[RMDB]
RNA sequence: GGGAACGACUCGAGUAGAGUCGAAAAACGUGAUGAUCCUCAAUGAAAUGGUACACACGGCACGUAUCAUUCCCUACGCUGAUGAAUUUGACAUCAAGCAGGGCAAGUGGGAAGGCAAUUCCAUUGCGUUCAACGUAGCGUUCGCGCUACGUUGAACAAAAGAAACAACAACAACAAC
Reactivity to DMS in 0.01 (KOAc 150mM, MgCl2 10mM, bicine 150mM(pH8.5), 24C), signal-to-noise 2, nucleotides 027 to 126: a080c050g020u000g000a070u010g010a100u000c000c000u000c100a120a200u000g000a070a060a030u010g020g000u000a050c060a130c130a040c080g020g000c040a120c100g020u010a030u000c010a040u000u000c010c010c010u010a090c120g000c040u000g000a000u000g000a070a130u010u020u010g020a240c010a020u010c000a030a090g020c010a060g000g000g030c240a010a040g030u000g040g000g000a040a120g010g000c120a070a140u000u000c060c030a090u000u000g000c100
Reactivity to 2A3 in 0.01 (KOAc 150mM, MgCl2 10mM, bicine 150mM(pH8.5), 24C), signal-to-noise 2, nucleotides 027 to 126: a000c040g040u020g020a120u030g000a030u030c020c030u040c030a050a140u210g130a120a030a060u110g040g010u050a020c040a000c010a020c050g110g000c150a040c080g030u060a040u080c020a020u020u000c010c000c000u060a060c150g000c050u000g000a000u030g020a050a250u110u170u220g090a070c000a000u020c030a010a000g030c020a030g070g000g000c020a070a040g110u070g120g050g000a050a040g030g070c060a040a060u110u060c030c000a010u040u080g050c090
An RNA of 177 nucleotides, treated with DMS and 2A3 and read out base by base.